[RMDB]
An RNA of 207 nucleotides, treated with 2A3 and read out base by base.
The reactions ran in a buffer of 150 mM KOAc, 10 mM MgCl2 and 150 mM bicine (pH 8.5), at 24 C.
Values are in units of 0.01, from 0 to 300, in steps of 10.
RNA sequence: GGGAACGACUCGAGUAGAGUCGAAAACGACAAGGGUGUAAAGAUCGCUCUUUUACUCGGCAUGAUACCACCGUUAUCGGGUCAACAGAGUAGUUGCAAAUGACAACAAUGCACAGGGUUAUGCUCUAAAAGUUCGUACCCUUCGGGGUACGAACAACUAAGGGGGUAGCUUCGGCUACCCCCUUAGAAAAGAAACAACAACAACAAC
Reactivity to 2A3 in 0.01 (KOAc 150mM, MgCl2 10mM, bicine 150mM(pH8.5), 24C), signal-to-noise 1, nucleotides 027 to 156: c080g060a010c010a060a000g010g070g000u050g020u160a140a140a000g120a120u230c020g040c000u000c000u010u070u010u040a140c120u010c000g000g010c040a010u070g010a040u050a080c000c000a010c000c000g110u020u130a070u070c040g020g030g000u000c000a010a010c110a000g060a010g040u140a030g000u080u030g000c010a030a120a300u140g000a040c050a060a010c020a110a000u030g040c010a000c040a010g020g080g000u180u130a040u110g020c000u000c000u080a060a060a000a060g000u000u010c000g000u000a000c000c010c000u000u030c180g010g000g000g030u000a000c000g000a000a010c000a000a000